[RMDB]
RNA sequence: GGGAACGACUCGAGUAGAGUCGAAAAAAGAACGUCAAGAACGUCCAGACGAAACCAGGGGUGUUCAAAACACCUGAAGGAGAAAUUGGGGCCGUGACUUUGGACUUCCCCACUGGAACAUCAGGCUCACCAAUAGUGGACAAAAACGGUGAUGUGAUAAUUUUACACCGUUCGCGGUGUAAAAUUAAAAAGAAACAACAACAACAAC
Reactivity to DMS in 0.01 (KOAc 150mM, MgCl2 10mM, bicine 150mM(pH8.5), 24C), signal-to-noise 1, nucleotides 027 to 156: a010a130g000a060a130c010g050u010c060a110a160g000a150a060c020g020u000c000c000a110g030a140c050g060a140a100a130c040c010a070g000g000g010g020u000g050u000u010c130a050a100a120a070c000a000c000c000u020g030a190a120g010g000a220g000a140a070a070u010u000g010g000g050g040c020c120g020u000g000a050c030u000u000u010g000g000a060c120u000u000c000c010c040c030a220c060u030g000g010a040a010c020a120u010c040a100g000g020c010u000c020a070c000c020a040a160u000a140g030u000g000g020a060c060a110a020a050a160a030c100g050g000u000g030a090u000g010u010g000a150
Reactivity to 2A3 in 0.01 (KOAc 150mM, MgCl2 10mM, bicine 150mM(pH8.5), 24C), signal-to-noise 1, nucleotides 027 to 156: a000a000g070a090a010c010g020u010c080a050a060g060a190a060c010g000u000c010c020a020g010a070c060g060a130a030a020c000c010a040g000g010g000g000u020g000u020u070c150a100a160a000a000c010a010c000c000u030g060a130a080g010g030a020g020a040a160a000u030u030g000g000g000g040c030c050g000u030g020a070c000u080u040u080g050g030a030c000u100u110c050c000c000c020a010c070u040g000g020a100a000c000a010u150c030a030g060g000c050u060c080a030c020c000a010a050u070a060g130u060g030g000a060c060a050a150a010a000a000c070g000g030u040g010a020u030g040u060g070a000